[RMDB]
RNA sequence: GGGAACGACUCGAGUAGAGUCGAAAAGAUAUGGACGUAGGGCGAUAAGCUGCUUUCGGAAACGAAAGGCAGCUUUUGACGCCUCAAGUCCUAAGUCAAAAGCCCAGGUCGUUCGCGACCUGGGCAAGUGAUGGUAGUGGUUCGCCACUACCAUCACAAAAGAAACAACAACAACAAC
Reactivity to DMS in 0.01 (KOAc 150mM, MgCl2 10mM, bicine 150mM(pH8.5), 24C), signal-to-noise 1, nucleotides 027 to 126: g030a050u000a240u010g000g000a010c000g010u020a300g000g000g010c000g000a150u010a040a000g030c000u000g000c000u000u000u010c000g010g000a130a030a140c010g000a000a030a030g010g040c000a010g010c000u000u000u000u000g000a210c020g000c000c000u000c030a300a300g010u000c000c000u000a010a120g010u030c010a070a100a170a170g000c010c010c000a020g000g020u000c000g000u000u020c230g020c020g000a010c000c000u000g000g000g000c000a000a000